[RMDB]
RNA sequence: GGGAACGACUCGAGUAGAGUCGAAAAAGGUAUCUAUUAUUGUUCAGAAAAUGACUCCUGAGCAAUUAGAGGAUGUGGAUUCCUCUCUUGCGGAUAAGCGGUUUAUUCAUUCCUACAAUGCUCAAGAUACAUUAGAUUCGUUCGCGAAUCUAAUGUAAAAAGAAACAACAACAACAAC
Reactivity to 2A3 in 0.01 (KOAc 150mM, MgCl2 10mM, bicine 150mM(pH8.5), 24C), signal-to-noise 3, nucleotides 027 to 126: a000g130g000u100a050u030c040u010a100u170u000a040u060u110g010u020u020c010a010g080a120a160a100a220u220g080a140c060u030c030c000u020g020a010g010c000a010a040u040u040a060g030a030g030g010a030u050g060u130g130g130a090u070u060c000c000u000c010u020c000u040u070g040c060g030g060a070u020a140a020g010c060g090g010u050u100u030a080u070u120c050a040u010u040c000c000u020a060c070a050a110u130g030c040u010c050a020a040g020a080
Reactivity to DMS in 0.01 (KOAc 150mM, MgCl2 10mM, bicine 150mM(pH8.5), 24C), signal-to-noise 4, nucleotides 027 to 126: a060g000g010u000a030u000c030u000a070u010u010a050u000u000g010u000u010c030a030g000a050a060a130a140u010g000a120c220u000c090c010u000g000a040g000c000a010a020u010u010a040g010a060g000g010a020u000g000u000g010g010a100u010u000c010c000u000c050u000c100u000u000g020c190g000g010a060u010a040a090g010c140g020g010u010u000u000a030u010u000c060a170u000u000c010c010u000a050c230a040a060u000g010c120u000c060a060a060g000a300

Description: An RNA of 177 nucleotides, treated with 2A3 and DMS and read out base by base. For 2A3, 2,864 sequencing reads were counted. Conditions: 150 mM KOAc, 10 mM MgCl2 and 150 mM bicine (pH 8.5), 24 C. Source: RMDB library OK2TRN, as collected in RNAgym.